[RMDB]
RNA sequence: GGGAACGACUCGAGUAGAGUCGAAAAACGUGCCUACUACGGUAGGCACGAGUAAUAUUAGCCUCAUUCUAUGGGUUGUUAUGAUGCAAUAUCAUCACAACCUCCAUGAACGAGGGUAAUCGACAAACAAAGAAUCUUUCUUCGGAAAGAUUCUUUGAAAAGAAACAACAACAACAAC
Reactivity to 2A3 in 0.01 (KOAc 150mM, MgCl2 10mM, bicine 150mM(pH8.5), 24C), signal-to-noise 4, nucleotides 027 to 126: a000c010g000u000g000c020c000u000a000c010u020a030c270g130g000u000a000g000g000c000a000c000g000a000g000u070a010a200u040a030u170u030a050g150c000c000u010c010a020u010u000c050u160a040u070g000g000g020u010u000g000u000u010a000u000g000a010u010g030c070a180a100u080a020u300c010a000u000c010a010c000a000a000c000c030u010c010c010a010u020g000a000a000c020g000a000g000g030g000u000a000a010u040c050g050a030c050a040a110a000
Reactivity to DMS in 0.01 (KOAc 150mM, MgCl2 10mM, bicine 150mM(pH8.5), 24C), signal-to-noise 5, nucleotides 027 to 126: a110c020g020u000g000c000c010u000a000c010u010a150c180g040g010u000a000g000g020c000a000c000g010a030g010u010a080a110u030a060u000u000a010g010c000c000u000c000a080u000u000c000u010a130u020g010g010g000u000u000g010u020u010a020u000g000a000u000g000c250a140a060u030a030u000c000a010u000c040a010c000a000a000c010c010u020c180c080a060u000g000a010a000c040g000a010g000g000g010u000a020a000u000c130g010a120c170a080a090a150